[RMDB]
RNA sequence: GGGAACGACUCGAGUAGAGUCGAAAACCGUAGGCAAGAACUACAGCGAAACCCACUCGAAGAACUGACGUUCGAAAGAGCGUCAGGGAGAGUGGGUAGUAGCUGCUUGCCUAAACGGAAAUACAAUCGAUAGCGAUUCGUCGCUAUCGAUUGUAAAGAACUAACUUAGCUUCGGCUAAGUUAGUUCAAAAGAAACAACAACAACAAC
Reactivity to 2A3 in 0.01 (KOAc 150mM, MgCl2 10mM, bicine 150mM(pH8.5), 24C), signal-to-noise 3, nucleotides 027 to 156: c000c000g010u010a000g000g000c010a010a010g020a130a080c150u200a110c260a010g000c000g000a020a010a020c000c000c000a000c010u010c010g280a300a080g000a040a020c000u000g000a000c000g010u010u000c010g010a070a010a020g000a000g010c000g000u000c000a000g000g000g010a030g000a000g000u010g020g000g000u000a000g000u000a000g000c000u000g000c000u000u000g000c000c000u000a020a000a000c010g030g050a030a100a070u070a010c010a020a000u000c000g000a000u000a010g000c010g000a020u030u050c220g030u000c000g120c000u000a000u000c000g000a000u000u000g000u010a000a000a000
Reactivity to DMS in 0.01 (KOAc 150mM, MgCl2 10mM, bicine 150mM(pH8.5), 24C), signal-to-noise 1, nucleotides 027 to 156: c040c000g090u000a030g000g040c000a040a060g010a200a140c020u000a180c010a020g000c000g020a300a260a300c030c000c000a020c020u010c000g010a260a240g010a180a240c000u000g040a020c000g030u000u010c020g010a180a110a300g000a020g000c000g030u000c020a000g010g020g020a150g030a030g000u010g000g000g000u000a000g040u000a200g020c010u000g000c030u000u000g000c000c000u010a020a020a070c000g000g000a100a110a190u000a000c000a000a020u000c040g030a000u000a000g000c000g080a080u010u020c230g030u000c000g070c000u000a000u000c000g000a000u000u000g000u000a020a040a150

An RNA of 207 nucleotides, treated with 2A3 and DMS and read out base by base. The RNA was probed in 150 mM KOAc, 10 mM MgCl2 and 150 mM bicine (pH 8.5) at 24 C. It was measured as part of the RMDB library RNAMAK. For 2A3 the reverse transcriptase was SuperScript II with manganese.